RNA sequence: GGGAACGACUCGAGUAGAGUCGAAAAUUGUUUUUUUAGGUUUUGAUUUUUGUGAAAUGUCGAUGAGAAAAUCAAAACCUAAAGAAAAUAGGAGAUGAAUUAGGAAACUUCGGUUUCCUAAUUCAUCCAACUGUAAUAAGUUCGCUUAUUACAGUUGAAAAGAAACAACAACAACAAC
Reactivity to DMS in 0.01 (KOAc 150mM, MgCl2 10mM, bicine 150mM(pH8.5), 24C), signal-to-noise 4, nucleotides 027 to 126: u010u010g010u010u000u000u000u000u000u000a020g010g000u000u000u000u000g000a010u000u000u000u000u000g020u010g020a110a120a090u000g020u010c230g000a090u000g010a300g000a010a010a010a010u000c000a000a000a010a000c000c000u000a000a000a010g000a000a000a030a050u010a080g000g010a220g000a010u000g010a010a000u000u000a000g000g000a020a010a010c000u000u010c230g020g010u000u000u000c000c000u010a000a000u000u000c000a000u000c000
Reactivity to 2A3 in 0.01 (KOAc 150mM, MgCl2 10mM, bicine 150mM(pH8.5), 24C), signal-to-noise 2, nucleotides 027 to 126: u050u020g000u020u010u030u000u030u000u000a000g000g010u010u020u000u010g010a000u000u000u020u020u030g080u050g170a120a200a200u250g120u270c130g040a050u130g110a110g030a100a030a000a000u020c010a000a000a000a010c000c000u000a000a020a000g000a000a000a020a040u120a060g050g130a100g000a050u010g000a000a000u010u000a000g000g010a000a000a010c030u030u030c200g020g000u010u010u000c010c010u000a000a000u000u000c000a000u010c010

Structure probing data (DMS and 2A3) for a 177-nucleotide construct. For DMS the reverse transcriptase was MarathonRT. Conditions: 150 mM KOAc, 10 mM MgCl2 and 150 mM bicine (pH 8.5), 24 C. Source: RMDB library RFMREP, as collected in RNAgym. High DMS reactivity at an A or C suggests that its Watson-Crick edge is free.